Conditions: 150 mM KOAc, 10 mM MgCl2 and 150 mM bicine (pH 8.5), 24 C. Structure probing data (DMS) for a 177-nucleotide construct. Values cover nucleotides 27 to 126. High DMS reactivity at an A or C suggests that its Watson-Crick edge is free.
RNA sequence: GGGAACGACUCGAGUAGAGUCGAAAAGAUAUGGAUGCGAUGGCACCGUCUCGCACCGUGCGAAGAACUGCCUCGGAAACGAGGCAGGGAGCACCGUGCGAGACGGUGUGUUGACGCAUCCUAAGUCCGAUUCAUGCGUGUUCGCACGCAUGAAUCGAAAAGAAACAACAACAACAAC
Reactivity to DMS in 0.01 (KOAc 150mM, MgCl2 10mM, bicine 150mM(pH8.5), 24C), signal-to-noise 1, nucleotides 027 to 126: g000a150u000a300u000g000g000a010u010g030c020g000a260u010g020g000c000a010c000c010g010u000c000u010c000g020c030a010c000c210g000u020g000c010g030a110a130g010a180a290c030u000g000c010c000u010c000g000g000a190a150a190c030g000a010g010g000c000a030g000g000g000a090g020c000a030c000c280g000u010g020c000g000a010g010a000c000g010g000u010g000u000g000u000u000g000a260c120g020c000a000u000c000c000u000a010a110g000u020c030